The record gives the reactivity of an RNA of 177 nucleotides to DMS and 2A3. Source: RMDB library OK1LIB, as collected in RNAgym. DMS adducts were read by reverse transcription with MarathonRT. Reactivities are rounded to 0.1 and cut off at 0 and 3. The reactions ran in a buffer of 150 mM KOAc, 10 mM MgCl2 and 150 mM bicine (pH 8.5), at 24 C. For DMS, 67,924 sequencing reads were counted.

[RMDB]
RNA sequence: GGGAACGACUCGAGUAGAGUCGAAAAAUGCGCACGUGAUGUAGGCUGGUCAGCACGGCGUCGCUGUGAUGAAGCAGCGCCCGGCGGGUCCGCUGUAACUGCUGUUGUAGGCGGUAACAGGCGCGGAAACACAGAAGUUAUUCGUAACUUCUGUGUUAAAAGAAACAACAACAACAAC
Reactivity to DMS in 0.01 (KOAc 150mM, MgCl2 10mM, bicine 150mM(pH8.5), 24C), signal-to-noise 9, nucleotides 027 to 126: a060u040g000c010g010c000a070c070g010u000g010a120u030g010u020a110g000g010c000u010g010g010u010c010a050g010c010a090c020g010g010c180g010u050c020g010c000u000g000u000g010a190u040g010a150a240g000c010a010g000c010g010c020c010c010g000g010c020g000g000g010u000c000c050g000c010u010g000u030a090a040c010u000g000c010u010g010u010u030g010u040a160g000g010c000g000g000u000a090a040c040a110g000g000c010g010c010g000g000a100
Reactivity to 2A3 in 0.01 (KOAc 150mM, MgCl2 10mM, bicine 150mM(pH8.5), 24C), signal-to-noise 9, nucleotides 027 to 126: a000u160g000c030g010c010a120c130g090u100g070a110u130g060u070a040g040g000c010u020g020g030u020c010a010g000c030a050c150g020g010c120g090u200c030g000c000u020g030u060g040a300u190g070a160a030g000c000a000g000c000g000c000c000c000g000g000c010g000g000g000u010c020c010g000c010u010g040u120a080a010c010u020g000c010u030g030u120u070g060u090a060g030g000c010g000g010u010a040a020c020a070g070g000c010g000c000g040g020a030